[RMDB]
RNA sequence: GGGAACGACUCGAGUAGAGUCGAAAAGAUAUGGAUCGGGAGGCUCAUCGAUCGUAACAAGUAUCGGAAACGAUACCGCCCGGGAGAGCUGACCGAUCCUAAGUCAAAAGCAUCCUUCGGGAUGCAAGCAUUGUGUAUACUUCGGUAUACACAAUGCAAAAGAAACAACAACAACAAC
Reactivity to 2A3 in 0.01 (KOAc 150mM, MgCl2 10mM, bicine 150mM(pH8.5), 24C), signal-to-noise 2, nucleotides 027 to 126: g020a010u050a010u150g000g000a000u010c000g000g000g000a020g020g010c010u020c030a180u300c100g030a060u070c030g050u120a120a140c120a270a130g020u000a010u010c000g030g000a090a040a010c010g010a000u000a000c000c010g110c060c040c010g040g000g000a300g010a000g000c000u040g020a030c010c000g010a000u010c000c000u000a000a000g000u000c030a060a020a030a130g010c000a000u020c020c000u020u090c300g150g000g000a000u020g000c020a000a020
Reactivity to DMS in 0.01 (KOAc 150mM, MgCl2 10mM, bicine 150mM(pH8.5), 24C), signal-to-noise 3, nucleotides 027 to 126: g000a060u000a300u010g000g010a030u000c000g010g000g010a300g000g000c000u010c000a190u020c090g010a070u020c020g030u020a060a110c160a100a100g010u000a010u010c000g010g000a160a080a170c000g000a000u000a010c000c050g020c300c130c020g000g000g030a060g000a010g000c010u010g000a300c000c000g000a000u000c010c000u000a030a070g000u000c030a110a100a100a120g010c000a000u000c000c000u000u040c220g050g010g030a020u000g000c010a020a030
Chemical mapping of a 177-nucleotide RNA with 2A3 and DMS. The RNA was probed in 150 mM KOAc, 10 mM MgCl2 and 150 mM bicine (pH 8.5) at 24 C. For 2A3, 5,316 sequencing reads were counted.